Structure probing data (2A3 and DMS) for a 177-nucleotide construct. For DMS, 945 sequencing reads were counted. In probing experiments dimethyl sulfate is read out at A N1 and C N3, which are open when not base-paired. The data come from the RNA Mapping Database (RMDB), library OK2TST. The reactions ran in a buffer of 150 mM KOAc, 10 mM MgCl2 and 150 mM bicine (pH 8.5), at 24 C.
[RMDB]
RNA sequence: GGGAACGACUCGAGUAGAGUCGAAAAGCUCUGUCUACCCGAGGGCACCAGAGGGCACGAGAAGGCUGGCUCCCUGGCGCUGACACGUCAGGCAACUGAGGCACAAGGCUGGCAUUUCUGAACCUUGCUCUUCUGUGCUGUUCGCAGCACAGAAGAGAAAAGAAACAACAACAACAAC
Reactivity to 2A3 in 0.01 (KOAc 150mM, MgCl2 10mM, bicine 150mM(pH8.5), 24C), signal-to-noise 1, nucleotides 027 to 126: g000c000u050c020u030g090u030c030u050a100c020c000c000g070a030g000g010g000c050a010c020c000a010g020a030g040g000g000c080a020c120g040a000g050a110a020g090g000c070u030g040g020c000u040c010c000c000u000g000g000c040g000c060u070g030a020c000a010c070g020u020c000a000g030g000c020a050a070c060u130g090a070g110g000c040a040c000a110a070g040g010c010u000g020g000c040a070u010u060u040c040u040g070a100a130c020c000u030u110g020
Reactivity to DMS in 0.01 (KOAc 150mM, MgCl2 10mM, bicine 150mM(pH8.5), 24C), signal-to-noise 1, nucleotides 027 to 126: g010c050u000c030u030g050u000c190u020a130c060c020c010g020a080g000g000g000c040a120c050c050a040g000a110g000g000g000c010a050c110g000a070g000a020a030g010g050c070u000g010g000c020u000c110c000c000u000g000g040c010g000c070u000g050a070c210a080c080g010u010c000a010g030g010c160a050a100c110u000g000a160g020g000c040a060c070a080a140g000g020c030u000g010g020c050a080u000u000u020c040u000g030a100a170c090c060u000u010g010